Structure probing data (2A3 and DMS) for a 177-nucleotide construct.
Source: RMDB library OK2TST, as collected in RNAgym.
The 2A3 profile rests on 1,074 reads.
Reactivities are rounded to 0.1 and cut off at 0 and 3.
For DMS, 1,720 sequencing reads were counted.
In probing experiments dimethyl sulfate is read out at A N1 and C N3, which are open when not base-paired.
The reactions ran in a buffer of 150 mM KOAc, 10 mM MgCl2 and 150 mM bicine (pH 8.5), at 24 C.
RNA sequence: GGGAACGACUCGAGUAGAGUCGAAAAACGAAAUGACGUUAAAGUAUUUAUGUUAGGCAACACCGUGAAUCAGUUUUGCCCGUAUUUUACCGAAAUGGGAUUGAAACAGGUGCGAAUAAUGGAACAGCCAUACGUACCCGUUCGCGGGUACGUAUGGAAAAGAAACAACAACAACAAC
Reactivity to 2A3 in 0.01 (KOAc 150mM, MgCl2 10mM, bicine 150mM(pH8.5), 24C), signal-to-noise 2, nucleotides 027 to 126: a030c080g010a110a040a030u150g020a080c030g000u070u140a090a030a010g020u020a100u050u130u030a130u130g030u020u070a030g020g000c000a020a010c010a000c010c020g090u080g090a070a060u100c010a000g050u060u030u050u130g020c010c010c010g000u070a160u020u040u070u120a100c060c030g060a000a100a030u050g000g000g000a020u010u140g070a100a070a000c030a030g020g030u000g010c000g030a070a070u070a120a040u050g080g070a040a020c030a050g130
Reactivity to DMS in 0.01 (KOAc 150mM, MgCl2 10mM, bicine 150mM(pH8.5), 24C), signal-to-noise 3, nucleotides 027 to 126: a090c060g010a090a040a060u010g000a100c070g000u000u000a080a100a130g020u000a040u010u010u000a040u040g030u000u010a060g000g000c100a050a050c030a040c010c020g030u030g020a070a140u000c100a040g000u000u010u010u010g020c020c000c030g030u000a050u010u010u010u010a100c160c090g000a030a050a100u000g010g010g010a110u020u000g000a100a040a100c110a110g000g000u020g000c020g000a090a050u000a080a050u010g000g000a070a100c200a130g020